The record gives the reactivity of an RNA of 177 nucleotides to DMS and 2A3. For DMS the reverse transcriptase was MarathonRT. 2A3 adducts were read by reverse transcription with SuperScript II with manganese.
RNA sequence: GGGAACGACUCGAGUAGAGUCGAAAACGUCCCUGACCUGGGUAGAGUGGCACCUGGUUGGUGGCGCCUGUCUCAUAUCAGUGAGGGACAAAACAACUCCUUGUUUAUCCCAGCUUGGCUUUUGCUCAGUAGCCAAUAGGUUCGCCUAUUGGCUACUAAAAGAAACAACAACAACAAC
Reactivity to DMS in 0.01 (KOAc 150mM, MgCl2 10mM, bicine 150mM(pH8.5), 24C), signal-to-noise 3, nucleotides 027 to 126: c220g000u000c000c000c000u000g000a020c120c100u010g010g020g000u000a060g010a090g020u000g000g010c010a040c010c010u020g020g030u040u060g010g010u020g010g010c040g010c010c000u010g000u020c000u020c020a090u020a110u010c130a040g000u000g010a050g000g000g000a010c000a090a050a040a070c100a030a080c180u020c130c090u000u000g010u010u000u010a110u010c010c010c000a190g020c110u000u010g010g010c060u000u020u010u000g020c130u010c140
Reactivity to 2A3 in 0.01 (KOAc 150mM, MgCl2 10mM, bicine 150mM(pH8.5), 24C), signal-to-noise 9, nucleotides 027 to 126: c050g010u000c000c000c000u000g100a040c000c010u040g020g010g000u060a040g040a120g120u030g050g050c020a010c010c010u110g290g020u130u200g030g010u040g020g030c010g030c010c000u070g100u040c010u010c040a110u110a080u140c060a010g030u030g110a020g010g000g020a000c020a020a060a000a000c030a020a030c040u100c020c040u040u040g040u050u080u080a070u030c000c010c000a020g020c040u040u060g030g010c020u040u070u080u160g030c050u050c090